[RMDB]
RNA sequence: GGGAACGACUCGAGUAGAGUCGAAAACUUGAGUUAAUUGAGUUUAUUUAAGCGCUGAUACAAUGCUGCCAGAAGAAUUUCAAUGCCAAGAACAGUUCAGUUUGAUUCAGUUUACAAACUGGUCUACUUACACUUCUUGAUUCGUCAAGAAGUGUAAAAAAGAAACAACAACAACAAC
Reactivity to 2A3 in 0.01 (KOAc 150mM, MgCl2 10mM, bicine 150mM(pH8.5), 24C), signal-to-noise 7, nucleotides 027 to 126: c020u040u030g040a050g100u120u190a130a050u060u040g020a010g050u010u050u100a300u050u190u060a090a030g030c020g000c050u020g040a060u060a170c090a060a060u120g000c070u100g000c020c020a040g030a130a020g020a020a020u120u170u060c030a020a010u050g020c020c010a040a000g040a080a040c030a060g010u080u080c000a000g010u020u070u060g080a140u090u100c010a030g200u040u060u090a070c060a030a030a000c010u000g000g020u000c010u010a030c010
Reactivity to DMS in 0.01 (KOAc 150mM, MgCl2 10mM, bicine 150mM(pH8.5), 24C), signal-to-noise 8, nucleotides 027 to 126: c010u000u000g010a100g020u010u020a100a070u010u000g010a050g000u000u000u010a080u020u000u010a120a150g000c020g020c020u010g010a150u050a120c180a100a080u020g010c010u020g020c020c040a250g010a060a090g010a050a030u000u010u010c030a030a040u010g010c020c030a040a050g010a070a100c160a040g000u010u010c040a040g010u000u010u000g000a090u010u010c150a060g010u010u000u030a100c140a020a040a010c000u000g000g000u000c010u000a070c180
This 177-nucleotide RNA was probed chemically with 2A3 and DMS. 2A3 is a SHAPE reagent: it acylates the 2'-hydroxyl of flexible nucleotides of all four kinds. The reactions ran in a buffer of 150 mM KOAc, 10 mM MgCl2 and 150 mM bicine (pH 8.5), at 24 C. High DMS reactivity at an A or C suggests that its Watson-Crick edge is free. The data come from the RNA Mapping Database (RMDB), libraries RFM100 and RFMREP.